[RMDB]
RNA sequence: GGGAACGACUCGAGUAGAGUCGAAAAACACCACCCCGUCCAUGUGCCUCAACCCUGACCUGGAGGGACCACCUCUAGAGGUGAGAGGGGAUGUUCAGUCUCCAAGGCUCACUCAAUCCUUCCGCCUCCGAUGGCGAGAGUUCGCUCUCGCCAUCGGAAAAGAAACAACAACAACAAC
Reactivity to 2A3 in 0.01 (KOAc 150mM, MgCl2 10mM, bicine 150mM(pH8.5), 24C), signal-to-noise 1, nucleotides 027 to 126: a000c080a070c000c000a040c030c000c000c000g000u010c020c020a050u070g070u080g090c020c000u060c020a030a040c000c040c010u060g040a050c000c000u000g090g000a030g000g020g000a020c090c060a050c000c020u000c040u050a060g000a040g200g040u070g050a090g070a000g000g000g000g050a000u110g090u160u110c010a020g000u030c000u070c060c030a060a080g000g030c020u040c060a020c010u080c020a030a050u020c030c000u070u060c030c010g000c010c020u010
This 177-nucleotide RNA was probed chemically with 2A3.
For 2A3 the reverse transcriptase was SuperScript II with manganese.
2A3 is a SHAPE reagent: it acylates the 2'-hydroxyl of flexible nucleotides of all four kinds.
Values cover nucleotides 27 to 126.
Conditions: 150 mM KOAc, 10 mM MgCl2 and 150 mM bicine (pH 8.5), 24 C.